The data come from the RNA Mapping Database (RMDB), library OK1LIB. An RNA of 177 nucleotides, treated with DMS and 2A3 and read out base by base. For DMS the reverse transcriptase was MarathonRT. 2A3 adducts were read by reverse transcription with SuperScript II with manganese.
RNA sequence: GGGAACGACUCGAGUAGAGUCGAAAAGACGGAGUUCAUUGCUUCUGGUGGCGCAGGUGUUGUGAUGGAGGAUGGCACGCUUGUGUUUCCUCUGAUGGCGGUGAAUGAGGCAGAAGACGUUUGCUCCGCCUAAUUUUAAUUUCGAUUAAAAUUAGGCAAAAGAAACAACAACAACAAC
Reactivity to DMS in 0.01 (KOAc 150mM, MgCl2 10mM, bicine 150mM(pH8.5), 24C), signal-to-noise 6, nucleotides 027 to 126: g020a120c120g000g000a060g000u010u020c130a070u030u010g000c020u010u000c010u000g000g010u020g010g020c070g010c050a070g000g010u010g010u010u000g010u010g000a110u030g000g010a030g000g000a030u040g010g000c010a020c020g020c220u050u060g010u000g010u000u000u010c000c000u000c020u000g000a090u020g000g000c030g000g000u000g000a070a080u020g000a120g000g000c030a040g010a040a030g010a120c110g000u000u000u000g000c020u010c040c130
Reactivity to 2A3 in 0.01 (KOAc 150mM, MgCl2 10mM, bicine 150mM(pH8.5), 24C), signal-to-noise 9, nucleotides 027 to 126: g100a010c070g020g020a040g010u050u070c060a060u080u130g020c010u020u020c020u030g140g050u050g030g030c030g000c040a050g010g080u070g020u190u120g060u060g070a130u190g030g040a040g050g030a050u130g110g000c010a000c020g090c090u150u190g010u010g010u010u040u020c010c000u010c020u040g060a070u070g050g010c030g000g040u030g030a040a080u090g000a030g030g000c010a000g020a040a010g050a030c040g010u020u060u050g020c020u020c010c020